[RMDB]
RNA sequence: GGGAACGACUCGAGUAGAGUCGAAAACGUCCACUGCCGGAAUGGAGAGCUGGCUGCCUACCCGUGUGGCCCUGAUGGGACCCCAUUGAAGACCAGCUGGGAGUGGUUUGCAGCAGCCCGAGCACGGAGAGAUCCUAUUGUUCGCAAUAGGAUCUCUAAAAGAAACAACAACAACAAC
Reactivity to DMS in 0.01 (KOAc 150mM, MgCl2 10mM, bicine 150mM(pH8.5), 24C), signal-to-noise 2, nucleotides 027 to 126: c130g010u010c010c010a050c080u010g020c050c000g000g000a150a060u000g020g000a140g020a080g010c020u010g000g030c010u010g010c030c020u000a140c040c010c030g010u000g040u000g020g030c010c010c000u000g000a080u020g000g020g010a080c110c090c010c020a070u010u000g030a110a080g000a120c040c020a050g020c050u000g010g010g000a120g010u010g020g010u000u000u000g030c010a030g010c030a080g010c000c000c010g000a130g030c070a150c050g000g000
Reactivity to 2A3 in 0.01 (KOAc 150mM, MgCl2 10mM, bicine 150mM(pH8.5), 24C), signal-to-noise 2, nucleotides 027 to 126: c020g100u000c000c010a000c080u080g000c020c010g060g110a110a100u110g080g070a140g030a030g100c010u010g130g030c010u020g000c000c030u030a050c030c000c030g000u100g060u070g200g000c000c010c000u080g080a120u240g010g000g080a170c030c000c010c040a110u060u190g050a080a010g050a060c010c000a010g070c030u010g040g020g030a080g020u130g000g020u110u110u070g020c000a020g000c000a000g000c050c000c020g030a040g010c040a030c040g040g000